[RMDB]
RNA sequence: GGGAACGACUCGAGUAGAGUCGAAAAUCACCAGAUGCUGCAUCACCUGAUCACUGAUGGCUCAACGGUAUCCGGCGGUACAACUGAAUACUUGUAGCUGCCUUUUUAGCGGGUUGGCUGCAAUCCGAAAAGAGGACACACUUCGGUGUGUCCUCAAGUGUUUCAUUAUCUUCGGAUAAUGAAACACAAAAGAAACAACAACAACAAC
Reactivity to 2A3 in 0.01 (KOAc 150mM, MgCl2 10mM, bicine 150mM(pH8.5), 24C), signal-to-noise 5, nucleotides 027 to 156: u080c020a020c040c000a010g020a050u050g010c030u020g050c010a000u010c010a030c010c010u070g030a060u050c040a020c070u050g010a040u040g070g000c060u070c120a100a040c030g010g000u020a010u020c000c030g010g000c020g030g040u100a060c050a110a040c080u150g080a110a070u140a150c080u010u010g010u010a010g020c010u010g010c000c000u060u030u010u030u110a060g010c040g000g010g040u140u240g080g000c010u030g000c000a010a030u030c020c010g030a080a050a050a040g000a000g000g010a000c000a000c000a000c000u040u090c140g040g000u000g000u000g000u000c000c000u000c000a000a000
Reactivity to DMS in 0.01 (KOAc 150mM, MgCl2 10mM, bicine 150mM(pH8.5), 24C), signal-to-noise 1, nucleotides 027 to 156: u020c030a090c020c010a070g000a060u000g030c040u000g000c040a190u010c130a040c000c000u000g020a140u000c090a110c120u010g020a130u000g000g000c030u000c020a140a070c040g000g020u000a010u000c020c010g000g040c000g030g000u000a080c100a070a060c020u020g000a110a060u010a040c090u010u000g020u000a030g020c020u010g010c020c010u000u000u030u000u000a080g030c010g010g020g020u000u010g060g030c020u000g000c000a070a090u000c000c010g010a100a070a130a160g000a030g000g020a030c000a010c000a010c010u000u010c270g020g040u000g010u000g020u000c010c000u000c000a000a040
Structure probing data (2A3 and DMS) for a 207-nucleotide construct. For DMS the reverse transcriptase was MarathonRT.